An RNA of 177 nucleotides, treated with 2A3 and DMS and read out base by base. The 2A3 profile rests on 1,674 reads. The reactions ran in a buffer of 150 mM KOAc, 10 mM MgCl2 and 150 mM bicine (pH 8.5), at 24 C. Source: RMDB library OK2TST, as collected in RNAgym. In probing experiments dimethyl sulfate is read out at A N1 and C N3, which are open when not base-paired.
RNA sequence: GGGAACGACUCGAGUAGAGUCGAAAAAGGAGUUGAAGAAUGCAAUUUGCGAUGGCAGAAAUUGGCGAUACUCAUCUUUUAGUUAAUGCAGAUGGAACGCCCAUCUCGCACAAGGAUAGUGAUACUCUCUGCUUUCAUAGUUCGCUAUGAAAGCAGAAAAAGAAACAACAACAACAAC
Reactivity to 2A3 in 0.01 (KOAc 150mM, MgCl2 10mM, bicine 150mM(pH8.5), 24C), signal-to-noise 2, nucleotides 027 to 126: a010g070g000a050g000u030u040g070a050a030g070a090a060u120g010c020a070a110u050u000u090g040c040g050a130u150g170g000c060a030g080a070a080a060u060u060g090g000c030g000a020u050a090c000u000c040a060u040c000u030u080u020u070a090g050u090u160a160a050u140g000c030a010g010a020u020g020g020a100a080c110g150c020c000c010a010u000c000u030c070g000c020a030c040a050a030g060g030a040u060a080g090u060g030a040u030a110c010u040c000
Reactivity to DMS in 0.01 (KOAc 150mM, MgCl2 10mM, bicine 150mM(pH8.5), 24C), signal-to-noise 4, nucleotides 027 to 126: a050g010g000a060g010u010u010g010a120a090g010a100a070u010g020c050a060a050u000u010u010g040c070g020a140u000g020g020c040a050g000a030a050a090u010u000g010g000c030g020a090u010a060c040u010c070a040u000c010u000u000u000u030a090g000u020u010a110a150u010g010c060a020g000a020u000g020g020a160a160c250g000c170c000c030a020u000c020u010c140g050c010a060c110a050a070g000g010a030u000a030g000u000g020a130u020a060c060u000c070